[RMDB]
RNA sequence: GGGAACGACUCGAGUAGAGUCGAAAAGAGGAUAAACCAGCUGCAGUUAAAAAUUUAAUGUUUCAGGUAUUGUACACCCCACAUGGAGGAGUUGUGCCACAGAGACACAAUUCAAGAGUUUGGAAUGCCAUCAUUGUUCAUUCGUGAACAAUGAUGGAAAAGAAACAACAACAACAAC
Reactivity to 2A3 in 0.01 (KOAc 150mM, MgCl2 10mM, bicine 150mM(pH8.5), 24C), signal-to-noise 6, nucleotides 027 to 126: g060a010g040g010a050u050a080a110a030c010c010a030g000c040u050g000c050a060g060u160u180a100a070a050a090a130u120u130u210a140a080u120g040u040u040u020c040a020g000g050u020a060u080u110g030u040a030c020a020c040c020c030c000a060c060a090u180g070g080a070g000g060a040g050u020u020g010u020g010c020c040a140c030a100g060a000g030a090c010a020c010a050a020u030u040c020a070a030g050a020g050u020u050u040g040g050a130a030u120g050
Reactivity to DMS in 0.01 (KOAc 150mM, MgCl2 10mM, bicine 150mM(pH8.5), 24C), signal-to-noise 3, nucleotides 027 to 126: g030a050g020g000a060u030a040a100a060c050c020a060g010c010u000g000c000a090g020u000u000a030a070a040a100a130u040u010u040a050a070u000g000u020u000u000c020a040g020g000u000a030u050u020g010u000a110c040a070c020c000c040c030a060c140a030u010g000g000a100g010g000a020g010u020u010g000u010g010c040c010a130c150a090g000a060g000a080c040a040c080a040a010u020u000c040a100a030g000a200g010u000u000u000g000g000a030a090u020g000